[RMDB]
RNA sequence: GGGAACGACUCGAGUAGAGUCGAAAAGAGGAGUAUUCGUACUCCUCAAAAAAGCGUACUACUUCUUCAACAGCCAUGUGGGUAGUCCCAAAUAGGACUAUAAUCCACAAUGGACAUGAAGAAGUAUCGCAAAAAAGCUACUGUUCGCAGUAGCUAAUGCAAUAGACAUAUUCGUAUGUCUAUUGCAAAAAGAAACAACAACAACAAC
Reactivity to DMS in 0.01 (KOAc 150mM, MgCl2 10mM, bicine 150mM(pH8.5), 24C), signal-to-noise 3, nucleotides 027 to 156: g000a020g030g010a030g030u000a040u000u010c300g040u000a020c000u000c000c010u000c000a000a010a040a130a090a090g000c040g030u000a100c120u000a030c000u010u010c000u000u000c000a060a080c060a190g050c010c010a090u010g010u000g020g020g020u000a010g010u000c000c000c010a040a100a240u000a030g010g020a020c010u000a080u000a190a080u010c010c010a000c030a050a030u010g000g000a070c070a300u000g000a010a000g010a010a030g010u000a000u000c020g020c030a000a050a040a100a130a060g010c000u000a000c000u000g020u000u000c290g070c010a010g020u000a020g010c000u000a000a060
Reactivity to 2A3 in 0.01 (KOAc 150mM, MgCl2 10mM, bicine 150mM(pH8.5), 24C), signal-to-noise 3, nucleotides 027 to 156: g010a000g000g030a000g000u010a010u030u030c020g000u010a020c000u000c000c010u000c000a000a010a010a000a000a000g030c020g030u070a040c030u000a010c000u050u000c010u000u000c010a090a090c050a190g040c000c000a000u000g000u020g000g000g020u010a010g000u040c010c000c000a260a300a170u280a090g010g000a000c010u030a020u080a220a180u040c000c000a000c030a050a130u020g000g010a020c040a110u050g000a000a010g000a000a000g000u000a000u010c000g000c000a010a080a140a030a000a000g020c010u030a000c000u000g030u050u140c160g000c140a000g000u000a010g000c010u010a010a040

Chemical mapping of a 207-nucleotide RNA with DMS and 2A3. Source: RMDB library RNAMAK, as collected in RNAgym. Conditions: 150 mM KOAc, 10 mM MgCl2 and 150 mM bicine (pH 8.5), 24 C.